[RMDB]
RNA sequence: GGGAACGACUCGAGUAGAGUCGAAAAAGAUAGCACUUACGAGUGCUAUCAACGCUUCCUCAUGCUGACAUAUUUACGAGAGGGUGCAAUUCAUAACCUUCUGGUAAGAGUGGCAGUUGAGGGGUAAGUCCGAAGGCCACUUCGGUGGCCUUCGGACAAAAGAAACAACAACAACAAC
Reactivity to 2A3 in 0.01 (KOAc 150mM, MgCl2 10mM, bicine 150mM(pH8.5), 24C), signal-to-noise 1, nucleotides 027 to 126: a000g000a000u000a000g000c040a000c010u150u040a230c300g060a000g000u000g040c000u000a000u000c000a000a000c090g000c000u300u260c050c000u000c000a000u300g000c000u000g070a000c000a000u180a160u100u000u050a000c030g190a000g000a000g040g010g000u030g020c110a060a300u230u130c020a090u080a030a010c000c000u020u020c000u070g070g000u000a050a000g100a030g110u000g030g000c000a000g000u000u000g000a000g010g000g000g020u000a060a020